Conditions: 150 mM KOAc, 10 mM MgCl2 and 150 mM bicine (pH 8.5), 24 C. Structure probing data (2A3 and DMS) for a 207-nucleotide construct. For DMS, 1,239 sequencing reads were counted. It was measured as part of the RMDB library OK3TST. Values cover nucleotides 27 to 156. For DMS the reverse transcriptase was MarathonRT.
RNA sequence: GGGAACGACUCGAGUAGAGUCGAAAAGGCUGCUGCCGGAGCCGAUACCGGAAUACGAGACCUAAUGUGCGGUCGAAUGCACUGAAGUACGAAAGUACGAAGAGGUCAAACCGAGGACCGAGACUCGAUAUGCUCGCUAGAUGGAGCUUUACAUCAAGCCCACUGAUUAGUUCGCUAAUCAGUGGGCAAAAGAAACAACAACAACAAC
Reactivity to 2A3 in 0.01 (KOAc 150mM, MgCl2 10mM, bicine 150mM(pH8.5), 24C), signal-to-noise 2, nucleotides 027 to 156: g070g010c020u020g000c010u060g010c030c020g010g000a000g030c010c160g050a020u110a070c040c000g050g000a070a040u190a050c080g040a050g020a100c000c010u040a060a070u190g000u010g010c020g030g000u090c050g060a030a020u160g000c000a010c000u050g040a130a040g040u000a000c010g010a090a000a000g000u010a000c000g030a040a010g080a030g050g020u000c080a050a020a010c010c000g020a020g050g010a020c000c030g030a020g000a010c010u010c020g010a020u000a030u190g020c010u000c040g050c090u020a030g020a080u040g060g000a030g000c000u030u060u100a100c060a080u050c050a050a040
Reactivity to DMS in 0.01 (KOAc 150mM, MgCl2 10mM, bicine 150mM(pH8.5), 24C), signal-to-noise 1, nucleotides 027 to 156: g010g020c000u000g000c040u000g020c010c050g070g020a080g020c000c110g030a160u000a080c040c010g000g000a130a070u000a050c110g040a300g010a070c020c000u000a040a050u000g100u000g000c040g070g000u030c040g030a060a090u000g000c010a000c000u000g030a140a250g000u000a000c010g000a120a090a300g040u000a010c030g050a070a130g000a130g000g020u000c050a050a190a000c030c050g000a140g040g040a100c070c000g020a300g020a160c010u030c040g020a110u000a060u020g060c100u000c070g090c170u000a070g000a170u000g050g010a050g020c020u000u000u000a050c110a110u010c100a040a270